[RMDB]
RNA sequence: GGGAACGACUCGAGUAGAGUCGAAAACAGAUGCUAUCCCAGGACGACUAAACCAAACAACUCUAAUAUCCACACGACCUGGCCUUUAUUACGGACAGUGCUCAGAAAUCUGUGGAUCAAACCACAGCUUCAUGCCCAUUGUACUUGAACUUGUCCCCCCUACUGUGUCGUUCGCGACACAGUAGGGAAAAGAAACAACAACAACAAC
Reactivity to 2A3 in 0.01 (KOAc 150mM, MgCl2 10mM, bicine 150mM(pH8.5), 24C), signal-to-noise 2, nucleotides 027 to 156: c040a010g070a030u130g010c040u050a040u100c050c000c010a000g000g080a000c020g060a030c030u090a050a070a040c090c010a140a100a030c110a060a050c050u110c050u090a120a090u130a140u260c000c030a070c000a010c090g030a030c000c040u050g000g000c030c000u160u300u120a150u120u230a030c020g030g010a000c020a020g010u070g050c010u030c060a000g070a040a040a010u030c040u010g000u000g000g020a000u070c000a000a000a090c000c000a000c010a020g000c000u090u070c030a000u060g050c010c010c010a040u050u070g080u000a050c050u040u060g080a050a010c010u080u040g070u060c010c000c010